[RMDB]
RNA sequence: GGGAACGACUCGAGUAGAGUCGAAAAGUAUCAUUGGGACUGUUCCGACUGGGUUCGCAAAAGCCAUAAUCCCUUGCCAGAUAUAACCGAAGUUCCUGGAGCAGAAAUAGCUGAUUCGUCGAGCUUAGCAUCAGCAGUAUUUCGAUACUGCUGAUGCAAAAGAAACAACAACAACAAC
Reactivity to DMS in 0.01 (KOAc 150mM, MgCl2 10mM, bicine 150mM(pH8.5), 24C), signal-to-noise 2, nucleotides 027 to 126: g020u000a030u000c070a130u000u000g020g010g020a130c050u000g000u000u000c000c020g040a120c100u020g050g000g000u000u000c060g010c130a070a040a090a100g030c030c030a010u030a090a090u000c040c010c010u020u000g120c010c030a050g000a100u000a060u000a140a140c050c040g000a070a100g000u000u000c020c010u000g000g010a090g030c030a060g010a070a070a080u000a080g000c030u000g000a080u000u000c110g010u000c070g000a100g010c110u000u000a160
Reactivity to 2A3 in 0.01 (KOAc 150mM, MgCl2 10mM, bicine 150mM(pH8.5), 24C), signal-to-noise 1, nucleotides 027 to 126: g020u000a050u180c060a070u110u120g060g010g040a030c010u050g070u090u040c040c030g000a030c030u080g130g050g000u060u020c060g000c090a010a000a040a140g000c000c000a010u060a100a140u070c010c000c000u000u050g060c010c000a030g000a020u020a010u020a190a020c010c030g040a060a010g020u040u040c000c020u000g050g000a020g040c080a020g100a050a060a010u160a020g020c000u000g000a100u070u050c060g000u020c020g030a030g060c000u040u080a010